[RMDB]
RNA sequence: GGGAACGACUCGAGUAGAGUCGAAAAGCACCUGGGUUCGCCCAGGUGCAAAGAUCAGUAGCAUGCAAGAACAAAUCCGAUAGGAUGCUACAGGGAAACCAAAAAGCCAGUGCUUCGGCACUGGCAAGUUUAAUAUGGUCUUCGGACCAUAUUAAACAAAAGAAACAACAACAACAAC
Reactivity to DMS in 0.01 (KOAc 150mM, MgCl2 10mM, bicine 150mM(pH8.5), 24C), signal-to-noise 3, nucleotides 027 to 126: g010c010a000c010c000u000g000g000g000u000u010c210g040c000c000c030a010g030g000u000g030c000a000a040a070g030a200u000c060a090g010u000a000g010c000a010u000g010c070a120a130g010a050a190c150a090a080a100u010c040c050g020a190u020a120g000g000a030u000g010c010u000a010c030a140g020g000g000a070a050a160c020c050a080a050a090a120a120g010c000c000a000g000u000g010c010u000u010c230g010g030c000a000c000u000g000g010c000a010a000
Reactivity to 2A3 in 0.01 (KOAc 150mM, MgCl2 10mM, bicine 150mM(pH8.5), 24C), signal-to-noise 3, nucleotides 027 to 126: g000c000a000c010c000u010g010g030g030u050u080c180g100c050c020c000a010g010g000u000g000c000a010a000a000g000a060u080c030a020g010u000a000g020c010a010u120g060c040a110a010g060a250a110c060a130a180a090u070c050c040g070a090u130a120g050g030a010u010g000c000u000a000c000a010g030g030g000a050a070a050c010c010a060a080a060a020a000g010c000c010a010g000u000g010c000u050u120c230g080g000c000a000c000u010g000g000c010a010a000
Description
Chemical mapping of a 177-nucleotide RNA with DMS and 2A3. The RNA was probed in 150 mM KOAc, 10 mM MgCl2 and 150 mM bicine (pH 8.5) at 24 C.